RNA sequence: GGGAACGACUCGAGUAGAGUCGAAAAUGGCCACAUCCAGCCUCUGGGCUCCAUCCACUGAGGCGGUUGGCCCGUGCUGACCCACAGGUCAUGGAGUCUCAGGCCUCAGGCCCUCAGUCCAGAAGGGUCACCUUGAUGGGUUCGCCCAUCAAGGUGAAAAAGAAACAACAACAACAAC
Reactivity to 2A3 in 0.01 (KOAc 150mM, MgCl2 10mM, bicine 150mM(pH8.5), 24C), signal-to-noise 1, nucleotides 027 to 126: u090g020g000c030c000a050c040a160u110c030c040a000g010c030c000u000c010u050g000g000g010c000u080c000c000a050u070c070c040a090c090u030g000a060g080g060c040g000g000u030u030g020g000c000c010c000g290u300g000c030u060g000a020c010c000c000a030c060a050g030g010u100c010a030u040g050g020a040g040u000c030u050c040a030g000g050c040c020u080c060a060g000g000c030c030c000u050c040a040g070u030c090c000a020g090a130a060g050g000g000
Reactivity to DMS in 0.01 (KOAc 150mM, MgCl2 10mM, bicine 150mM(pH8.5), 24C), signal-to-noise 2, nucleotides 027 to 126: u010g000g010c040c040a070c220a150u000c070c040a250g020c040c020u000c070u020g000g000g000c050u010c040c040a020u020c100c260a130c020u010g010a090g050g010c060g040g010u010u000g020g000c000c130c200g000u000g010c010u000g000a060c020c060c020a100c030a040g010g010u000c200a040u010g000g000a020g010u000c050u000c300a070g010g000c020c010u020c130a100g000g000c020c000c020u000c030a060g000u000c050c060a110g030a110a060g010g000g000